[RMDB]
RNA sequence: GGGAACGACUCGAGUAGAGUCGAAAAAUAGUACUCUAGCAUGCGUCUAGCUCAUAGAUGCGCUAGCGAUCGUACCAGUACAGCUAGGUCAUGAGUACUGAUCACGCUAGGUACUGAUCCUAGUAUGGCCCACGCAGUAAUUCGUUACUGCGUGGGCAAAAGAAACAACAACAACAAC
Reactivity to 2A3 in 0.01 (KOAc 150mM, MgCl2 10mM, bicine 150mM(pH8.5), 24C), signal-to-noise 2, nucleotides 027 to 126: a000u180a000g030u000a030c020u000c040u240a020g020c030a040u080g060c010g060u020c010u000a000g040c060u030c090a050u040a160g020a120u140g070c040g030c110u000a000g010c010g070a060u100c100g020u040a060c070c020a040g040u050a080c010a060g030c050u130a050g060g060u010c010a050u070g020a000g030u030a200c120u020g000a000u040c000a000c050g000c000u010a020g040g000u000a000c000u040g030a030u080c000c010u000a000g170u110a190u050g140
Reactivity to DMS in 0.01 (KOAc 150mM, MgCl2 10mM, bicine 150mM(pH8.5), 24C), signal-to-noise 1, nucleotides 027 to 126: a060u000a050g030u010a040c020u030c000u000a060g040c010a040u000g020c190g020u000c000u010a080g000c040u000c120a020u000a080g000a070u020g020c260g020c020u000a010g000c090g000a040u010c160g000u040a030c160c240a190g030u000a000c140a130g000c030u010a030g010g060u010c030a060u000g040a080g000u020a110c110u010g000a030u000c010a030c110g010c020u000a060g010g000u000a130c080u000g000a080u000c030c010u000a000g000u010a080u100g000

The record gives the reactivity of an RNA of 177 nucleotides to 2A3 and DMS. For 2A3 the reverse transcriptase was SuperScript II with manganese. The RNA was probed in 150 mM KOAc, 10 mM MgCl2 and 150 mM bicine (pH 8.5) at 24 C. Source: RMDB library OK2TRN, as collected in RNAgym.